[RMDB]
RNA sequence: GGGAACGACUCGAGUAGAGUCGAAAAGGUGUAGAAUCAAUCUCCAUGUCCUCUCGCCUGGGCCUCUUCGCCGGGGGUCCUCCCUCUUCGUCCUUCUUCUUUCUCAACAUUCCGACGAUGUUUCCCACUCGGUCUUCGUUCGCGAAGACCAAAAGAAACAACAACAACAAC
Reactivity to DMS in 0.01 (KOAc 150mM, MgCl2 10mM, bicine 150mM(pH8.5), 24C), signal-to-noise 4, nucleotides 027 to 129: g030g040u040g030u050a050g030a060a050u070c100a120a110u000c050u020c080c010a110u050g030u000c060c030u010c030u000c050g040c000c070u040g000g030g030c000c030u030c050u000u000c090g050c120c150g000g000g000g000g000u040c000c000u020c020c030c020u010c040u020u030c060g020u030c050c000u010u020c030u020u020c030u000u000u000c060u010c000a030a090c150a180u050u010c000c000g000a100c100g020a000u000g020u010u000u010c030c010c040a140c000u000c130
Reactivity to 2A3 in 0.01 (KOAc 150mM, MgCl2 10mM, bicine 150mM(pH8.5), 24C), signal-to-noise 6, nucleotides 027 to 129: g010g000u050g030u110a030g040a070a070u120c050a020a100u050c070u010c070c030a030u080g050u030c000c020u000c000u020c010g020c000c010u040g000g010g000c000c010u030c030u140u090c050g060c070c030g000g000g000g000g000u010c000c000u030c010c000c000u040c010u030u020c010g060u010c020c000u020u030c000u010u020c000u010u020u010c020u010c030a030a130c020a090u090u040c030c010g010a030c020g000a060u090g040u010u060u000c000c010c020a030c020u050c040